[RMDB]
RNA sequence: GGGAACGACUCGAGUAGAGUCGAAAACAGCGCCAUCGGGCCUGAGGGACUCGACACCUCGCUGGACUGUGUGGCCGUGUCAACACCUCCUCAGGAAGGCAAGACCACCUGGAUUGUCCACUACAUGAUAUUAUGCUCACUUCGGUGAGCAUAAUAUAAAAGAAACAACAACAACAAC
Reactivity to DMS in 0.01 (KOAc 150mM, MgCl2 10mM, bicine 150mM(pH8.5), 24C), signal-to-noise 5, nucleotides 027 to 126: c040a060g010c080g020c100c060a050u000c050g000g000g010c010c020u000g010a090g020g010g020a100c060u010c170g020a060c190a100c060c070u000c070g020c040u010g010g000a130c060u000g000u020g030u000g020g000c040c090g010u000g000u010c030a070a090c200a160c040c030u000c040c030u000c110a070g010g000a100a070g000g000c020a070a070g000a130c020c030a060c030c020u000g010g000a140u000u010g000u000c010c020a070c150u000a060c150a110u000g000
Reactivity to 2A3 in 0.01 (KOAc 150mM, MgCl2 10mM, bicine 150mM(pH8.5), 24C), signal-to-noise 2, nucleotides 027 to 126: c030a010g010c000g010c060c000a030u030c040g040g030g000c010c000u060g040a090g030g010g050a080c030u000c070g020a010c020a040c080c010u040c030g000c080u070g000g050a060c040u020g010u010g010u030g200g030c020c060g010u030g020u030c030a090a070c020a090c070c000u080c010c010u060c030a000g000g060a040a040g010g050c010a040a000g020a060c000c010a030c000c020u040g030g040a120u080u060g000u040c020c010a020c050u130a050c050a080u230g070
Record summary:
The data come from the RNA Mapping Database (RMDB), library OK2TST. An RNA of 177 nucleotides, treated with DMS and 2A3 and read out base by base. DMS adducts were read by reverse transcription with MarathonRT. The reactions ran in a buffer of 150 mM KOAc, 10 mM MgCl2 and 150 mM bicine (pH 8.5), at 24 C. 2A3 adducts were read by reverse transcription with SuperScript II with manganese. Values cover nucleotides 27 to 126.